[RMDB]
RNA sequence: GGGAACGACUCGAGUAGAGUCGAAAAGAUAUGGAAGCAGGGAGCUAGGGCUAUGCACCGAUGAAACGCUUCGGAAACGAAGCGUGGAGGUGCAUAGCCAACUAGCGAAGAACUGCUUCCUAAGUCACUAGUUAUCCUAGUUCGCUAGGAUAACUAGAAAAGAAACAACAACAACAAC
Reactivity to 2A3 in 0.01 (KOAc 150mM, MgCl2 10mM, bicine 150mM(pH8.5), 24C), signal-to-noise 2, nucleotides 027 to 126: g020a020u090a020u170g010g000a000a000g000c000a000g040g020g020a020g000c000u000a010g000g000g000c000u010a000u010g000c010a010c010c010g280a300u030g000a010a010a000c000g000c010u030u000c000g010g030a020a060a010c010g000a020a000g010c000g000u000g010g010a020g030g010u030g000c000a000u000a000g020c000c000a010a010c000u010a000g020c010g020a080a030g020a020a010c010u000g000c020u000u000c000c000u000a010a040g010u000c020a010
Reactivity to DMS in 0.01 (KOAc 150mM, MgCl2 10mM, bicine 150mM(pH8.5), 24C), signal-to-noise 4, nucleotides 027 to 126: g010a030u010a300u000g000g010a010a010g010c000a000g000g020g010a110g020c000u000a010g020g000g010c000u000a000u000g010c000a000c000c000g030a120u010g000a160a170a020c000g000c000u000u000c000g000g000a120a120a190c010g010a000a010g010c000g000u000g010g000a030g020g010u000g000c010a000u000a000g000c000c000a010a020c000u000a010g010c010g000a070a140g000a120a230c000u000g010c000u000u000c000c010u000a010a100g000u000c030a300
Structure probing data (2A3 and DMS) for a 177-nucleotide construct. The data come from the RNA Mapping Database (RMDB), library TTRINS. The DMS profile rests on 7,952 reads. Values cover nucleotides 27 to 126. For 2A3 the reverse transcriptase was SuperScript II with manganese.